Chemical mapping of a 207-nucleotide RNA with DMS and 2A3. 2A3 adducts were read by reverse transcription with SuperScript II with manganese. It was measured as part of the RMDB library OK3TST.
[RMDB]
RNA sequence: GGGAACGACUCGAGUAGAGUCGAAAAGAGCUCGAGAUGCGAUUGUAGACUGUUACAGCAUCUGCUAUCAGUCUGAGAUAGCUCAGGAUAGCUGGAGCUAUGUGCAACGGUGCACACUCCAGUGGCACCGUGAACAAUCGUUCAUGCCACCGAGCAGCGUAACGAGAAUGUUCGCAUUCUCGUUACGAAAAGAAACAACAACAACAAC
Reactivity to DMS in 0.01 (KOAc 150mM, MgCl2 10mM, bicine 150mM(pH8.5), 24C), signal-to-noise 3, nucleotides 027 to 156: g000a140g020c000u000c000g040a160g010a140u000g040c020g000a060u000u000g020u010a060g010a040c020u000g010u000u000a040c040a060g050c050a200u000c110u000g040c030u000a060u000c010a050g030u020c040u000g000a190g010a080u000a020g010c010u000c010a100g030g000a160u010a190g000c000u030g020g010a020g000c020u000a020u010g020u000g010c010a100a050c060g010g010u010g010c010a120c010a050c030u000c120c130a130g010u000g000g000c020a010c030c020g020u000g000a110a040c000a020a040u000c060g030u010u000c060a080u000g010c010c020a220c060c020g020a010g010c020a080g020
Reactivity to 2A3 in 0.01 (KOAc 150mM, MgCl2 10mM, bicine 150mM(pH8.5), 24C), signal-to-noise 4, nucleotides 027 to 156: g090a020g000c010u010c020g100a100g040a070u090g020c000g010a000u000u010g030u030a040g030a170c070u040g020u060u170a020c030a020g000c020a220u060c060u130g000c000u020a010u020c000a050g190u020c010u020g020a020g010a080u120a050g050c000u000c010a000g020g020a070u040a060g040c010u030g030g000a000g000c010u010a020u060g010u030g000c010a010a010c020g030g000u010g000c020a020c000a020c300u120c100c080a050g000u020g000g000c000a000c000c010g000u010g000a020a000c000a000a000u000c000g030u130u120c040a040u120g080c000c020a090c050c000g000a010g010c000a010g050